RNA sequence: GGGAACGACUCGAGUAGAGUCGAAAAGCCUGCCGGAUAAAGCUCAGCUUUCCAGCCACGCAUCGGCGAAGUCGACCGAAUGCCCGGACGAAUCCUCGCUGUGGUUGUGCAGCGUCUUGCGAUAGAGCGUAAAUGGCGAUUUCGAUCGCCAUUUACGAAAAGAAACAACAACAACAAC
Reactivity to 2A3 in 0.01 (KOAc 150mM, MgCl2 10mM, bicine 150mM(pH8.5), 24C), signal-to-noise 4, nucleotides 027 to 126: g060c000c000u000g000c010c020g020g000a050u180a170a110a010g000c000u050c170a030g000c000u070u050u050c030c060a000g000c040c000a070c050g030c000a050u140c020g030g000c000g040a090a010g150u130c050g020a130c000c000g080a130a030u130g030c020c030c000g050g050a050c010g030a020a060u060c000c010u000c040g020c010u040g010u030g160g000u000u060g000u070g010c010a010g000c000g020u020c070u030u060g020c020g110a090u070a110g160a030g040
Reactivity to DMS in 0.01 (KOAc 150mM, MgCl2 10mM, bicine 150mM(pH8.5), 24C), signal-to-noise 2, nucleotides 027 to 126: g000c020c030u030g030c000c000g040g020a140u040a070a100a120g000c010u010c060a110g000c020u000u000u000c080c050a110g050c030c070a080c130g010c080a060u030c140g000g010c050g000a120a070g000u040c020g000a120c000c020g000a080a030u000g010c010c080c020g000g000a070c040g000a050a100u060c010c020u000c010g020c000u010g080u020g000g000u000u000g000u000g000c100a020g000c010g000u000c030u000u000g000c140g000a120u050a080g000a070g000

Structure probing data (2A3 and DMS) for a 177-nucleotide construct. Values cover nucleotides 27 to 126. It was measured as part of the RMDB library OK1LIB. For DMS the reverse transcriptase was MarathonRT. For 2A3, 2,262 sequencing reads were counted.